Chemical mapping of a 207-nucleotide RNA with 2A3.

[RMDB]
RNA sequence: GGGAACGACUCGAGUAGAGUCGAAAAUGAGUGUCAGUUCAUCUGCUACUGUGGAGUGGAGAGAAUCUUUCACUGAGCUUCCUCCCCCUUGCUUGGCCAGCCAGCAGUGCCGACCAACUUCCAAAGGCUUGGAGUUCUCCACCUCUUACUCUACAGACAGGUACGUCAAUUUCGAUUGACGUACCUGAAAAGAAACAACAACAACAAC
Reactivity to 2A3 in 0.01 (KOAc 150mM, MgCl2 10mM, bicine 150mM(pH8.5), 24C), signal-to-noise 1, nucleotides 027 to 156: u080g020a020g050u050g040u100c040a060g030u030u090c080a100u000c100u000g090c060u040a040c000u110g010u030g030g020a040g020u050g010g020a020g000a030g020a020a050u090c050u070u130u110c050a190c120u090g000a020g010c030u110u090c050c040u050c000c000c020c000c000u020u040g070c000u000u020g000g040c010c000a000g020c030c000a020g110c010a060g120u100g150c010c000g060a020c000c040a000a010c020u110u170c020c060a060a100a010g000g000c020u120u150g000g000a040g010u000u000c010u030c010c000a030c020c000u000c000u000u020a000c010u030c000u030a010c090a010g000a000
As a SHAPE reagent, 2A3 marks flexible, mostly unpaired nucleotides at the ribose 2'-OH.